[RMDB]
RNA sequence: GGGAACGACUCGAGUAGAGUCGAAAAGAAUCGCAGUUCGCUGCGAUUCAAAUAAAAUCAGCGGUAAGGAGGCGUAAAAAAUUACCGCUGAACGCCUCCUUAAAACUACGUCCUUCGGGACGUAGAAGAGAUGACAUAACUUCGGUUAUGUCAUCUCAAAAGAAACAACAACAACAAC
Reactivity to DMS in 0.01 (KOAc 150mM, MgCl2 10mM, bicine 150mM(pH8.5), 24C), signal-to-noise 2, nucleotides 027 to 126: g010a000a000u000c000g020c000a020g010u000u000c210g030c010u010g000c000g000a020u000u000c000a010a120a070u030a040a070a100a070u020c100a080g010c050g020g010u010a050a020g000g010a000g020g020c040g020u000a000a040a050a030a030a090u000u000a100c060c050g020c050u000g010a050a030c050g000c020c010u000c020c010u000u000a000a020a060a220c010u000a000c000g000u000c000c000u000u000c260g030g000g000a000c000g000u000a000g000a030a080
Reactivity to 2A3 in 0.01 (KOAc 150mM, MgCl2 10mM, bicine 150mM(pH8.5), 24C), signal-to-noise 2, nucleotides 027 to 126: g010a000a010u000c010g000c000a000g010u040u040c090g040c110u010g000c000g010a010u000u000c000a000a000a000u050a000a010a000a030u050c010a010g020c010g080g050u040a030a000g020g020a030g010g040c040g020u100a080a140a020a050a000a020u130u090a040c020c020g000c010u010g020a000a000c020g010c010c000u000c000c000u030u020a020a110a010a040c010u000a000c000g000u010c000c000u010u070c190g060g000g010a000c000g000u000a000g000a000a000